[RMDB]
RNA sequence: GGGAACGACUCGAGUAGAGUCGAAAAUAUUACAUCUUCGGAUGUAAUAACUGGUGGUGGCAGGCUUGUUGCUAGUGGCGCAACUGUUGCCAUGACUGCGCAAUCGCUCUGAAUUCGUUCAGAGCAAGCGAAAAUGGCAAUUCGUUGCCAUUUUCGCAAAAGAAACAACAACAACAAC
Reactivity to 2A3 in 0.01 (KOAc 150mM, MgCl2 10mM, bicine 150mM(pH8.5), 24C), signal-to-noise 1, nucleotides 027 to 126: u040a000u000u000a000c010a010u000c020u020u050c190g130g000a000u010g000u010a000a000u010a000a030c040u060g020g000u020g000g000u000g000g030c020a040g000g100c060u080u130g020u030u150g050c010u030a110g190u060g290g000c060g050c020a020a020c010u070g030u120u000g000c010c000a000u010g160a040c050u070g080c130g000c080a050a070u100c070g000c020u000c000u000g020a010a020u030u110c270g000u050u040c000a000g000a000g010c010a000a000
Reactivity to DMS in 0.01 (KOAc 150mM, MgCl2 10mM, bicine 150mM(pH8.5), 24C), signal-to-noise 2, nucleotides 027 to 126: u000a000u000u000a000c000a000u000c000u000u010c230g010g000a010u000g000u000a010a000u000a020a120c140u000g010g020u000g000g040u000g000g000c040a050g000g000c150u000u000g010u000u020g010c020u000a150g030u010g020g010c100g040c010a030a040c040u020g000u000u000g000c010c010a020u000g000a180c080u000g010c030g030c120a140a090u020c140g000c000u000c000u000g000a020a030u010u000c180g000u000u000c000a000g000a010g010c010a030a020